[RMDB]
RNA sequence: GGGAACGACUCGAGUAGAGUCGAAAAUAGUCGCUGCGGUCGUUGAUAUCCCGCCGGUCCCGCGCACCCUGGAAGGGCACACGGGUACGGUAGUCACCGAACUUGAACUGAAUCAUACCCGAUUGAAGAUGUGGGUUACGGUGAUGUCCACGCGCUCGAUCAUAAGUAGCUUCGGCUACUUAUGAUCAAAAGAAACAACAACAACAAC
Reactivity to 2A3 in 0.01 (KOAc 150mM, MgCl2 10mM, bicine 150mM(pH8.5), 24C), signal-to-noise 4, nucleotides 027 to 156: u130a020g120u090c050g000c120u070g030c020g080g040u150c010g010u000u020g010a000u020a040u060c020c010c000g010c000c000g020g030u050c000c010c010g000c010g010c010a110c010c010c020u120g160g160a260a080g140g010g000c070a010c000a000c010g000g000g050u090a050c020g020g010u030a020g020u010c000a000c030c000g020a020a020c000u030u070g080a070a060c000u010g020a030a020u010c020a030u070a230c030c050c040g150a160u070u130g020a060a030g030a080u050g000u090g040g030g000u020u030a070c000g000g010u020g010a000u050g010u000c030c010a010c000g040c020g030c020u050c110
Reactivity to DMS in 0.01 (KOAc 150mM, MgCl2 10mM, bicine 150mM(pH8.5), 24C), signal-to-noise 2, nucleotides 027 to 156: u000a150g010u000c030g040c010u000g020c040g010g000u010c050g010u010u020g000a170u010a120u000c030c010c020g020c000c020g030g000u000c010c010c010g000c010g020c040a090c020c010c010u000g020g020a130a140g000g000g040c010a040c000a080c000g000g000g020u000a030c000g010g020u000a090g000u000c020a040c030c000g050a120a040c020u000u010g040a150a220c060u000g020a200a150u000c050a080u010a080c150c090c050g020a140u010u000g010a080a160g000a140u000g000u010g000g010g030u000u020a070c000g000g030u000g030a060u000g020u000c010c050a080c060g040c050g010c110u020c120